[RMDB]
This 207-nucleotide RNA was probed chemically with 2A3. Values cover nucleotides 27 to 156. For 2A3, 643 sequencing reads were counted.

RNA sequence: GGGAACGACUCGAGUAGAGUCGAAAAGAAAGAAAGAAGAUUCACCAGGAGGCAAGGAUCCUCAACUACGUUAUUCGGGCACCUUGAGUUGAGAGGAGCUAGUGGUGCGCCCGGCCUGGAGAUCAAAACACGACAGGCGGGUUCGCCCGCCUGUCAAUGUAGAAUGGGUUUUCGAACCCAUUCUACAAAAAGAAACAACAACAACAAC
Reactivity to 2A3 in 0.01 (KOAc 150mM, MgCl2 10mM, bicine 150mM(pH8.5), 24C), signal-to-noise 1, nucleotides 027 to 156: g070a010a070a000g100a020a080a000g060a040a020g010a020u010u050c030a050c140c010a000g100g020a070g020g030c000a020a100g070g010a000u000c000c000u000c000a060a000c000u300a140c040g120u270u140a090u030u160c010g000g090g000c010a010c000c000u060u300g010a000g060u000u000g020a010g020a000g000g020a010g010c000u000a020g060u020g090g000u010g010c010g000c000c000c000g020g020c010c010u000g000g020a050g010a040u010c020a000a050a000a000c050a020c090g000a000c000a000g000g030c020g020g020g010u000u010c040g050c000c010c000g020c000c000u000g000u000c000a000a000